An RNA of 177 nucleotides, treated with DMS and 2A3 and read out base by base. The RNA was probed in 150 mM KOAc, 10 mM MgCl2 and 150 mM bicine (pH 8.5) at 24 C. It was measured as part of the RMDB libraries RFM100 and RFMREP. For DMS the reverse transcriptase was MarathonRT. 2A3 adducts were read by reverse transcription with SuperScript II with manganese.
RNA sequence: GGGAACGACUCGAGUAGAGUCGAAAAUAACGGUGAGUACCCUCACCCUCUGGCCUACCUUAAGAACGGGAUAGUUCUUCAGGCUGUUUGCGGGUUCCGUUAGGUGGCGCUGUAGAGGCCACUCGGGCAAGUAAAAUGACUUCGGUCAUUUUACUUGAAAAGAAACAACAACAACAAC
Reactivity to DMS in 0.01 (KOAc 150mM, MgCl2 10mM, bicine 150mM(pH8.5), 24C), signal-to-noise 9, nucleotides 027 to 126: u020a040a040c090g010g000u010g010a100g030u010a120c090c070c020u000c120a050c020c010c040u000c050u010g000g000c030c040u000a170c050c040u000u020a030a020g010a020a010c010g010g010g020a140u030a110g000u000u000c000u010u000c150a030g000g000c140u000g010u000u010u010g010c120g000g010g010u000u010c010c010g010u010u010a080g000g010u000g000g010c010g010c050u000g010u010a100g010a130g000g000c010c010a010c010u010c060g000g010g010
Reactivity to 2A3 in 0.01 (KOAc 150mM, MgCl2 10mM, bicine 150mM(pH8.5), 24C), signal-to-noise 9, nucleotides 027 to 126: u060a020a010c020g010g020u070g060a070g100u200a160c020c020c000u020c020a020c000c010c000u020c030u030g060g000c000c010u050a050c030c000u040u020a010a000g000a020a000c010g090g050g180a140u190a120g020u000u010c000u010u010c010a010g010g020c020u050g050u120u110u090g050c050g000g000g000u040u040c010c000g020u060u040a040g000g030u010g010g010c100g040c190u060g100u210a080g050a070g160g000c000c000a000c010u050c010g010g020g010
Values cover nucleotides 27 to 126.